[RMDB]
RNA sequence: GGGAACGACUCGAGUAGAGUCGAAAAGAAACGCUACGGCUCAGAUGGCCGGGGCGACAACCGCGGCCACACCCGGUCCGUGGACCGAAAAAGGUACCCGGAGACGGGGAGCUCACCAGGCCUAGAAGGGUAUAGUUUUCUUCGGAAAACUAUACCCAAAAGAAACAACAACAACAAC
Reactivity to DMS in 0.01 (KOAc 150mM, MgCl2 10mM, bicine 150mM(pH8.5), 24C), signal-to-noise 2, nucleotides 027 to 126: g010a150a100a110c050g010c030u000a070c090g000g000c030u020c050a140g040a120u030g050g000c000c010g000g000g010g000c070g000a080c300a060a060c050c020g050c110g000g000c000c000a190c060a270c000c050c000g040g000u000c000c000g000u060g010g000a020c010c000g030a040a170a090a160a050g030g000u010a120c010c060c030g050g010a030g010a130c010g000g030g000g050a010g010c140u010c090a070c140c060a160g030g010c040c030u010a020g020a170a180
Reactivity to 2A3 in 0.01 (KOAc 150mM, MgCl2 10mM, bicine 150mM(pH8.5), 24C), signal-to-noise 2, nucleotides 027 to 126: g040a030a060a010c060g010c030u040a000c020g000g030c020u030c150a150g130a190u120g020g030c000c000g000g000g000g000c050g030a000c010a000a030c000c000g070c030g180g000c000c000a000c010a040c020c000c010g010g030u000c000c020g060u300g020g000a010c000c000g130a120a060a060a020a150g160g000u300a300c000c000c000g000g000a030g020a010c010g000g000g000g000a020g000c010u000c000a020c040c020a050g010g030c010c000u060a040g000a100a080
This 177-nucleotide RNA was probed chemically with DMS and 2A3. DMS adducts were read by reverse transcription with MarathonRT. The reactions ran in a buffer of 150 mM KOAc, 10 mM MgCl2 and 150 mM bicine (pH 8.5), at 24 C. 2A3 adducts were read by reverse transcription with SuperScript II with manganese.